This 177-nucleotide RNA was probed chemically with DMS and 2A3. For 2A3 the reverse transcriptase was SuperScript II with manganese.
RNA sequence: GGGAACGACUCGAGUAGAGUCGAAAAAUGGGGAAAUGAACCGAGUCCAGGAGGCAGAAGAAAACACAUCCAAGGACCCAGAGCAGAGUGAGCUCGUUUUCCUCUGAGCAGGUCUGAAGCCGUGACGGGGAAGAAGAAAUUUCGAUUUCUUCUUCCCAAAAGAAACAACAACAACAAC
Reactivity to DMS in 0.01 (KOAc 150mM, MgCl2 10mM, bicine 150mM(pH8.5), 24C), signal-to-noise 5, nucleotides 027 to 126: a070u000g010g000g000g000a080a080a080u010g010a120a120c080c040g010a100g010u000c040c040a120g000g000a060g000g020c050a060g010a050a070g000a080a050a050a090c080a050c080a080u010c040c050a080a220g010g000a050c030c030c040a100g010a050g010c020a040g010a060g000u010g010a070g010c070u010c140g000u000u000u000u000c030c010u000c020u000g000a050g030c070a130g000g010u000c010u000g000a170a100g020c080c030g000u000g010a120c160g020
Reactivity to 2A3 in 0.01 (KOAc 150mM, MgCl2 10mM, bicine 150mM(pH8.5), 24C), signal-to-noise 2, nucleotides 027 to 126: a000u080g010g000g000g050a000a080a130u170g010a030a060c030c030g000a040g040u040c060c010a030g030g050a030g000g030c060a010g020a190a010g060a020a140a040a020c050a010c000a030u040c010c010a040a020g050g000a020c010c020c050a060g000a020g040c020a000g000a050g070u180g030a020g000c030u020c130g010u120u020u060u050c010c000u030c010u000g000a010g040c040a000g020g030u000c010u060g010a040a000g000c040c010g060u040g020a050c080g040

Overview: The RNA was probed in 150 mM KOAc, 10 mM MgCl2 and 150 mM bicine (pH 8.5) at 24 C.